[RMDB]
RNA sequence: GGGAACGACUCGAGUAGAGUCGAAAAACAUAGUUUGGCCGACGUCAUACCAUUGAAGACGAAUCGUUAAAGACACCAGCUCGUCUUAUAGGAGCCCAUUUAGCAAAUACAGUCCUGUAGGAACCAAUUCACGUCUAACUUUCGAGUUAGACGUGAAAAAAGAAACAACAACAACAAC
Reactivity to 2A3 in 0.01 (KOAc 150mM, MgCl2 10mM, bicine 150mM(pH8.5), 24C), signal-to-noise 1, nucleotides 027 to 126: a010c050a090u180a040g030u120u060u060g030g010c000c010g000a010c000g020u020c000a060u060a070c000c010a070u050u130g140a080a000g020a000c020g030a090a070u040c010g010u030u190a090a040a050g070a010c030a020c040c010a000g130c010u030c010g070u000c060u040u020a080u060a130g050g050a030g000c000c000c000a040u130u060u050a040g000c010a090a050a000u110a010c040a060g110u030c000c010u050g000u010a060g000g070a020a030c000c000a030a050
Reactivity to DMS in 0.01 (KOAc 150mM, MgCl2 10mM, bicine 150mM(pH8.5), 24C), signal-to-noise 2, nucleotides 027 to 126: a060c100a050u000a090g010u010u000u010g030g060c050c000g000a040c070g010u000c010a040u000a130c070c050a090u000u010g000a160a060g020a040c040g020a070a050u020c060g020u000u020a080a050a120g010a030c130a060c090c040a090g000c080u000c110g010u010c010u000u000a090u000a050g000g010a120g020c040c040c060a070u000u000u000a070g010c090a040a030a100u000a060c110a080g010u000c000c040u000g030u010a020g000g020a070a050c060c090a060a160